[RMDB]
Overview: The record gives the reactivity of an RNA of 177 nucleotides to DMS and 2A3. The reactions ran in a buffer of 150 mM KOAc, 10 mM MgCl2 and 150 mM bicine (pH 8.5), at 24 C. 2A3 adducts were read by reverse transcription with SuperScript II with manganese. The data come from the RNA Mapping Database (RMDB), library OK2TRN.
RNA sequence: GGGAACGACUCGAGUAGAGUCGAAAAGACACGACGGAGACGUCGUGUCAAAGAGUGGGAAACCACUCAAAGAGCCACAGCUUCGGCUGUGGCUCAAGGCGCGGCAUAGUCCGCGGAACAAACUCAAAUCAAAAUACUGAUUCGUCAGUAUUUUGAUAAAAGAAACAACAACAACAAC
Reactivity to DMS in 0.01 (KOAc 150mM, MgCl2 10mM, bicine 150mM(pH8.5), 24C), signal-to-noise 3, nucleotides 027 to 126: g000a030c000a010c000g020a020c000g020g020a290g000a240c010g020u000c000g020u000g010u000c010a030a060a120g000a020g030u000g000g010g000a170a090a210c010c010a010c000u000c010a020a070a110g010a020g000c000c000a010c010a000g000c010u000u000c280g030g010c010u000g050u000g000g000c000u010c000a020a030g000g010c030g030c010g000g000c010a230u000a150g000u000c000c000g000c000g010g000a070a090c170a070a090a070c070u000c110a080a170
Reactivity to 2A3 in 0.01 (KOAc 150mM, MgCl2 10mM, bicine 150mM(pH8.5), 24C), signal-to-noise 3, nucleotides 027 to 126: g000a000c010a010c000g000a010c020g000g010a060g030a040c000g000u000c000g000u010g000u000c000a000a000a000g010a000g000u010g000g000g010a020a080a100c000c000a000c000u000c000a020a030a010g010a000g000c020c000a010c010a020g020c020u130u150c300g120g000c020u020g020u000g000g000c010u000c000a000a010g020g000c010g010c010g000g010c040a160u160a140g040u060c000c000g000c000g010g020a040a010c040a050a070a030c050u100c120a120a150